[RMDB]
RNA sequence: GGGAACGACUCGAGUAGAGUCGAAAAGCUAGAUACUCUUCUAAGCCCUGUUAUGUAUAUUAACUAAUUUUUUAAAUUACACAAAUCAGAGAGGUUAAGUAACUUGCCCAAGAUUACCCAACAAUACUAGGAUUUGAACCUAAGUUUGUCUCACCCCCGAAUACGAUCUUUUCGAAGAUCGUAUUCGAAAAGAAACAACAACAACAAC
Reactivity to 2A3 in 0.01 (KOAc 150mM, MgCl2 10mM, bicine 150mM(pH8.5), 24C), signal-to-noise 2, nucleotides 027 to 156: g000c000u020a010g030a050u060a100c030u040c010u250u000c010u100a170a170g010c000c000c020u010g000u080u070a080u050g000u030a130u010a070u300u050a110a080c010u070a160a290u090u040u070u080u000u300a170a130a090u180u240a060c020a000c010a000a240a030u210c020a000g020a000g010a000g050g090u020u030a040a000g010u010a080a060c020u010u040g000c020c000c010a060a020g070a090u130u280a150c030c050c010a060a050c000a110a000u030a090c010u020a010g100g000a200u100u110u250g090a060a100c010c000u010a070a090g050u020u020u050g010u000c050u020c060a050c000c000c020c010